The record gives the reactivity of an RNA of 207 nucleotides to 2A3 and DMS. DMS adducts were read by reverse transcription with MarathonRT. For DMS, 6,070 sequencing reads were counted. The data come from the RNA Mapping Database (RMDB), library OK3TST. For 2A3, 3,730 sequencing reads were counted. High 2A3 reactivity points to a flexible backbone, as in loops and unpaired stretches.

[RMDB]
RNA sequence: GGGAACGACUCGAGUAGAGUCGAAAAUAUGCGAGGACUUUGAGGGCGAUGAAGUACGAUCGACGUUGAGGCUAUAAAACGGAAAUACCGUGCCAAGAUAAAACCGGGCUGGCCGAUUAAAGGCGACUCCGUGCAUUUCACUGACCGAUUCAACGGGACAAUUAACCGUAUUCGUACGGUUAAUUGUAAAAGAAACAACAACAACAAC
Reactivity to 2A3 in 0.01 (KOAc 150mM, MgCl2 10mM, bicine 150mM(pH8.5), 24C), signal-to-noise 5, nucleotides 027 to 156: u220a060u080g050c030g020a040g030g030a040c040u060u060u090g040a070g010g030g010c030g030a050u070g040a040a020g040u050a020c040g030a060u060c030g040a050c020g030u010u070g040a020g020g000c020u030a020u080a210a090a020a000c030g000g050a050a160a080u140a110c000c010g010u010g000c000c010a060a020g020a040u130a040a100a000a030c050c030g000g020g000c050u020g040g020c010c010g010a020u070u180a140a050a010g020g000c010g040a040c020u000c020c020g020u040g030c020a050u040u030u120c040a060c040u060g080a080c000c030g060a080u100u100c040a080a070c010g010g000g010
Reactivity to DMS in 0.01 (KOAc 150mM, MgCl2 10mM, bicine 150mM(pH8.5), 24C), signal-to-noise 3, nucleotides 027 to 156: u010a080u010g000c040g010a100g020g010a070c040u020u010u000g030a090g010g000g020c050g000a060u000g020a070a080g030u000a100c080g010a110u010c000g020a120c070g000u010u000g000a110g040g020c050u000a100u010a020a040a100a090c020g000g010a080a100a150u000a120c050c030g020u000g000c060c040a060a110g020a130u000a040a040a090a120c050c040g010g010g000c080u020g050g000c010c000g000a130u000u000a050a100a190g030g010c010g010a110c030u000c020c020g060u000g020c060a120u000u000u000c030a100c040u010g000a080c010c000g000a160u010u010c040a030a100c040g030g000g000